[RMDB]
RNA sequence: GGGAACGACUCGAGUAGAGUCGAAAAACGGCGGGUGGGGUCCGGCUGGGCGGCGAGGCCGUCGAACACGCACCGGCUUUUGCCCGCGCCCGCGCCGGGCUGGCCUACGUGCCGCAGGGCCGGGGCCAACCUAAGAGUGGUUCGCCACUCUUAGGUUAAAAGAAACAACAACAACAAC
Reactivity to DMS in 0.01 (KOAc 150mM, MgCl2 10mM, bicine 150mM(pH8.5), 24C), signal-to-noise 6, nucleotides 027 to 126: a140c100g010g020c070g000g010g020u000g010g010g010g010u010c040c040g010g010c040u010g010g010g020c020g020g010c020g000a060g010g010c010c040g030u000c070g000a110a110c200a100c140g010c110a100c130c020g010g000c040u000u000u010u010g030c030c030c170g000c110g010c010c010c030g010c150g010c020c000g010g000g010c070u000g010g000c000c000u010a060c110g010u010g010c010c010g010c180a080g000g000g010c020c020g000g000g010g010c050c060
Reactivity to 2A3 in 0.01 (KOAc 150mM, MgCl2 10mM, bicine 150mM(pH8.5), 24C), signal-to-noise 2, nucleotides 027 to 126: a000c060g080g010c090g020g020g080u090g030g080g010g020u000c010c020g000g000c030u050g030g050g010c020g000g010c010g040a050g030g040c000c010g050u060c040g050a150a040c150a010c190g030c010a070c030c020g010g000c000u080u060u110u260g030c010c010c010g100c030g010c030c010c000g020c060g010c020c010g020g000g000c030u070g000g000c000c010u120a180c040g080u160g000c000c000g040c050a040g060g050g030c000c030g000g000g000g010c010c030